[RMDB]
RNA sequence: GGGAACGACUCGAGUAGAGUCGAAAAAUGAUUCGUAGUGUAAGACGAUCGACAGUCAUCGCUUGCCAGCAGGACCACCAAAGGAAUACGCUUCGGUAACUACUCGAGAUCCCAAGCGAUUAAACAAGUUCAUUCGUACUUUCGAGUACGAAUGAACAAAAGAAACAACAACAACAAC
Reactivity to 2A3 in 0.01 (KOAc 150mM, MgCl2 10mM, bicine 150mM(pH8.5), 24C), signal-to-noise 2, nucleotides 027 to 126: a000u110g010a020u070u040c030g060u130a110g020u020g020u150a090a030g080a140c030g010a010u030c040g040a070c060a100g060u090c030a040u010c020g000c050u030u030g020c000c010a040g010c020a030g080g020a050c030c040a070c040c020a070a070a130g150g020a050a040u060a070c040g020c090u010u010c000g040g000u030a120a120c010u000a030c000u020c010g000a000g000a050u000c000c010c010a000a000g040c030g090a090u050u240a110a000a040c060a070a060
Reactivity to DMS in 0.01 (KOAc 150mM, MgCl2 10mM, bicine 150mM(pH8.5), 24C), signal-to-noise 1, nucleotides 027 to 126: a080u000g000a050u000u030c040g010u020a030g040u000g040u000a020a040g020a090c050g010a120u000c060g040a070c110a050g040u000c050a060u000c010g000c030u010u010g000c030c060a150g000c060a080g010g040a150c060c040a060c040c030a060a060a070g010g020a060a070u020a020c080g020c050u020u000c090g040g000u000a080a170c000u000a040c000u000c000g020a010g010a170u000c010c010c000a070a060g040c300g040a060u020u000a060a000a020c120a070a040

This 177-nucleotide RNA was probed chemically with 2A3 and DMS. Values cover nucleotides 27 to 126. For 2A3 the reverse transcriptase was SuperScript II with manganese. Conditions: 150 mM KOAc, 10 mM MgCl2 and 150 mM bicine (pH 8.5), 24 C. For DMS the reverse transcriptase was MarathonRT.